[RMDB]
RNA sequence: GGGAACGACUCGAGUAGAGUCGAAAAUCUGACAUAAUCCCAUGUUCCAAAUCACUAUUGUUUUGUAAAAAAUCAGCCUAAAACUUUAAGGCUUAGAACAUGGCAACCGUUUUAUUAUCCUGCUGAUCAGGACUUGGGAAGGGUUCAGGUGGGUAGGUCGUAAUCUCUCAUUCGUGAGAGAUUACGAAAAAGAAACAACAACAACAAC
Reactivity to DMS in 0.01 (KOAc 150mM, MgCl2 10mM, bicine 150mM(pH8.5), 24C), signal-to-noise 1, nucleotides 027 to 156: u030c090u040g000a190c080a120u000a110a180u000c150c000c030a120u000g010u060u000c010c030a020a120a090u000c030a090c140u000a070u000u000g010u010u000u000u010g000u000a030a050a090a040a070a200u000c130a080g010c040c080u020a060a030a070a070c090u060u000u000a070a080g020g040c000u010u010a030g010a040a030c050a060u000g000g000c100a060a080c060c060g020u000u000u000u000a050u010u000a080u000c010c050u040g000c080u000g000a070u020c020a070g040g000a050c050u020u030g020g020g030a090a120g010g000g020u000u000c070a060g040g070u000g000g040g020u000a130g010g000
Reactivity to 2A3 in 0.01 (KOAc 150mM, MgCl2 10mM, bicine 150mM(pH8.5), 24C), signal-to-noise 5, nucleotides 027 to 156: u030c020u070g060a030c040a110u240a100a110u170c000c000c000a010u010g020u000u000c020c020a030a080a060u120c060a070c160u230a200u240u150g030u030u070u030u030g060u110a030a050a020a010a010a090u080c030a000g020c000c000u150a180a170a160a190c090u170u140u160a100a040g000g010c000u000u010a010g000a000a000c000a000u020g030g010c030a030a080c060c040g020u080u080u050u060a070u080u030a050u090c030c040u030g050c040u090g100a060u070c020a010g010g010a020c020u030u070g050g000g070a050a050g030g000g010u060u100c040a010g020g040u050g010g030g040u060a020g010g010